[RMDB]
RNA sequence: GGGAACGACUCGAGUAGAGUCGAAAACAUGAAGGUUCAGUGUCCUAGUUCCCUUCCCCCAGGAAAAACGACACGGGAGCUGGCCAAGACCUCUCUGGGUGAUGAGCCUAAGGGAUGGUUUUGUGUAUAUUACCUCAGCUUUCGAGCUGAGGUAAUAAAAAGAAACAACAACAACAAC
Reactivity to 2A3 in 0.01 (KOAc 150mM, MgCl2 10mM, bicine 150mM(pH8.5), 24C), signal-to-noise 1, nucleotides 027 to 126: c060a060u250g130a210a060g010g020u080u050c010a000g010u000g040u000c000c020u070a090g150u000u020c040c000c030u080u200c000c000c000c000c010a000g070g000a030a000a000a020a020c020g010a000c000a020c000g070g130g010a020g010c040u000g000g030c010c000a010a010g000a000c000c010u010c010u020c030u000g000g010g000u120g020a080u090g010a020g000c000c000u050a110a060g030g020g000a030u190g010g010u000u010u000u010g030u000g020u030a050
Reactivity to DMS in 0.01 (KOAc 150mM, MgCl2 10mM, bicine 150mM(pH8.5), 24C), signal-to-noise 3, nucleotides 027 to 126: c060a110u000g010a120a100g000g020u000u000c030a110g020u010g000u000c000c090u000a210g000u000u000c020c000c010u000u010c010c020c010c010c030a300g000g010a020a020a070a100a120c300g000a020c000a010c010g000g000g020a060g010c030u010g000g000c070c000a020a020g000a000c000c000u000c000u000c010u000g010g010g010u000g010a130u000g000a300g010c010c000u010a040a040g010g020g000a030u010g010g000u000u000u000u000g000u010g010u000a150